[RMDB]
RNA sequence: GGGAACGACUCGAGUAGAGUCGAAAAGGGGUCGUUUCCAGAGGGUUUGGGAAGCUUGGAUUUAUGGGACUGAAGCCUCCACGGUCCCAUUGUCAGCUUCAGAACCCGACGAAGGAAACGACGGAGGCACCCAAACACCUAUGUUCGCAUAGGUGAAGGUCAUUAUUCACUUCGGUGAAUAAUGACCAAAAGAAACAACAACAACAAC
Reactivity to 2A3 in 0.01 (KOAc 150mM, MgCl2 10mM, bicine 150mM(pH8.5), 24C), signal-to-noise 1, nucleotides 027 to 156: g120g020g050g000u010c000g000u010u010u000c000c000a010g000a010g040g040g020u000u070u100g230g120g040a060a000g010c070u300u300g180g000a110u130u190u130a010u080g000g000g000a000c000u030g020a070a010g000c000c000u000c000c000a000c000g050g010u000c000c000c000a000u000u000g020u010c000a040g000c000u000u000c000a010g000a000a010c000c020c000g000a060c000g000a020a000g000g000a000a000a010c000g000a000c020g000g000a000g000g030c000a080c000c000c000a000a080a020c010a000c000c000u000a000u010g030u060u050c300g040c120a010u000a000g000g000u000g020a090a060

This 207-nucleotide RNA was probed chemically with 2A3.